[RMDB]
RNA sequence: GGGAACGACUCGAGUAGAGUCGAAAAUAGUACUUCGGUAUCGCAGCCCUCCGCCGCGCCCCGCCCGAACGCUGCGGUGGUCGCCCACUCGUGCAGGUAACUCACGAUGCUGGAACUUUGCGGCCCUACUGUCAUUGAUCUUCGGAUCAAUGACAGUAAAAGAAACAACAACAACAAC
Reactivity to 2A3 in 0.01 (KOAc 150mM, MgCl2 10mM, bicine 150mM(pH8.5), 24C), signal-to-noise 2, nucleotides 027 to 126: u170a020g100u030a020c010u040u040c060g030g000u020a000u090c030g000c050a010g000c020c000c010u000c030c010g040c000c020g030c000g000c000c000c000c020g040c000c000c000g070a060a010c040g000c070u050g040c040g010g070u070g000g040u020c010g020c010c000c000a010c000u010c010g020u020g010c040a020g100g070u100a100a120c010u010c000a000c020g030a030u070g010c090u020g040g010a110a080c030u040u150u120g000c000g000g000c020c000c010u030
Reactivity to DMS in 0.01 (KOAc 150mM, MgCl2 10mM, bicine 150mM(pH8.5), 24C), signal-to-noise 1, nucleotides 027 to 126: u010a140g010u000a060c050u000u040c050g000g010u010a020u000c090g010c110a100g020c080c000c000u000c020c130g030c070c020g020c020g010c010c010c020c000g010c050c070c030g000a020a100c070g010c030u000g000c050g010g030u000g000g000u000c000g000c000c000c000a020c050u000c000g070u000g000c140a060g050g010u000a070a050c010u000c000a060c070g000a010u020g000c110u000g010g010a070a120c080u010u010u030g000c010g010g000c000c010c100u080